[RMDB]
Chemical mapping of a 177-nucleotide RNA with DMS and 2A3. For DMS, 901 sequencing reads were counted. DMS adducts were read by reverse transcription with MarathonRT. The 2A3 profile rests on 692 reads. The reactions ran in a buffer of 150 mM KOAc, 10 mM MgCl2 and 150 mM bicine (pH 8.5), at 24 C. For 2A3 the reverse transcriptase was SuperScript II with manganese.
RNA sequence: GGGAACGACUCGAGUAGAGUCGAAAAAACGUGCACAAGAAGUAUUCUCUGAAUCACUUAAAGACAGCAAGAACCCAGACCGACGUGUUGCACAACAAAACGCUUUUUACAAUGUUCUUAAAAAUGAGUACCUAAGGGAGUUCGCUCCCUUAGGUACAAAAGAAACAACAACAACAAC
Reactivity to DMS in 0.01 (KOAc 150mM, MgCl2 10mM, bicine 150mM(pH8.5), 24C), signal-to-noise 2, nucleotides 027 to 126: a060a080c110g000u000g010c040a070c060a130a140g020a110a040g010u020a080u000u000c020u000c130u000g000a140a000u000c090a050c030u000u010a030a050a060g000a040c110a040g010c020a050a040g000a070a130c000c010c010a080g000a080c100c030g050a050c090g000u000g000u050u000g000c000a060c050a120a040c070a040a050a050a050c100g000c040u000u000u000u000u000a080c130a160a060u010g000u000u010c010u010u010a040a040a030a030a080u020g020a250
Reactivity to 2A3 in 0.01 (KOAc 150mM, MgCl2 10mM, bicine 150mM(pH8.5), 24C), signal-to-noise 1, nucleotides 027 to 126: a010a000c050g060u020g000c010a000c040a130a040g160a050a000g010u040a020u120u010c110u000c030u090g080a070a050u020c050a060c040u070u090a070a080a030g040a050c040a010g020c000a020a100g040a070a040c030c020c000a040g030a050c040c000g070a060c040g050u070g010u080u040g000c000a010c010a040a040c010a010a080a000a000c040g030c010u000u110u020u080u090a050c070a100a040u210g020u030u000c030u000u180a010a170a050a150a100u300g000a000